Record summary
This 177-nucleotide RNA was probed chemically with DMS and 2A3. Conditions: 150 mM KOAc, 10 mM MgCl2 and 150 mM bicine (pH 8.5), 24 C. Values cover nucleotides 27 to 126. High DMS reactivity at an A or C suggests that its Watson-Crick edge is free. 2A3 adducts were read by reverse transcription with SuperScript II with manganese. DMS adducts were read by reverse transcription with MarathonRT.

RNA sequence: GGGAACGACUCGAGUAGAGUCGAAAAGAUAUGGAUGCGAUGGCCGUGCGAAGAACUGCCUCGGAAACGAGGCAGGGAGCACCGUGUUGACGCAUCCUAAGUCAAAAGAUCGACUUCGGUCGAUCAAGAAAGGGAGAAACUUCGGUUUCUCCCUUUCAAAAGAAACAACAACAACAAC
Reactivity to DMS in 0.01 (KOAc 150mM, MgCl2 10mM, bicine 150mM(pH8.5), 24C), signal-to-noise 3, nucleotides 027 to 126: g000a030u000a300u000g000g030a000u020g010c000g010a100u000g020g000c020c020g000u000g010c020g030a120a160g000a140a180c010u000g000c000c010u000c000g000g000a090a110a180c000g020a010g020g010c000a010g000g000g010a060g000c010a020c290c180g020u010g030u000u010g030a060c000g030c010a020u000c000c010u010a030a060g000u000c020a090a080a060a180g000a010u000c010g000a020c010u000u040c180g070g040u000c010g000a010u000c000a090a090
Reactivity to 2A3 in 0.01 (KOAc 150mM, MgCl2 10mM, bicine 150mM(pH8.5), 24C), signal-to-noise 1, nucleotides 027 to 126: g030a020u050a010u160g010g000a020u020g000c020g060a070u090g050g010c020c020g000u000g000c000g300a300a050g000a070a030c000u000g000c000c010u010c020g040g020a010a060a060c010g000a020g000g010c000a000g000g000g000a000g020c010a010c040c090g050u110g120u290u070g050a010c010g030c010a000u030c000c000u000a040a010g000u000c010a000a000a060a220g020a000u010c000g000a010c020u070u030c230g080g000u000c000g020a010u000c000a000a030

As a SHAPE reagent, 2A3 marks flexible, mostly unpaired nucleotides at the ribose 2'-OH.